[RMDB]
RNA sequence: GGGAACGACUCGAGUAGAGUCGAAAAUCAUGUCAGUAAGCAUGCCGGGGAAUGGUGGUUUACCCCGUUAUCAAAUGAUUACCGACCAAUAAUUGGCGAAACUCGUUUCGCGUUGGCUCCCUAAUUCGUUACCGCUGACCCUUCGGGGUCAGCGGAAGGAUUUACAAAAGUUCGCUUUUGUAAAUCCAAAAGAAACAACAACAACAAC
Reactivity to 2A3 in 0.01 (KOAc 150mM, MgCl2 10mM, bicine 150mM(pH8.5), 24C), signal-to-noise 1, nucleotides 027 to 156: u050c030a030u160g020u000c000a030g020u120a030a050g060c010a020u050g050c020c000g000g000g000g000a030a080u130g060g040u090g010g100u030u090u200a160c000c010c000c000g030u060u010a050u060c050a090a120a070u020g000a010u010u020a010c000c010g030a070c010c020a040a000u140a080a090u030u100g080g000c020g020a000a040a070c010u020c070g050u040u160u080c000g030c020g020u060u010g050g010c030u040c030c020c030u030a070a120u090u030c040g070u030u140a030c000c010g020c060u000g000a010c000c000c040u010u070c270g030g000g010g040u010c010a000g060c000g000g000a010a010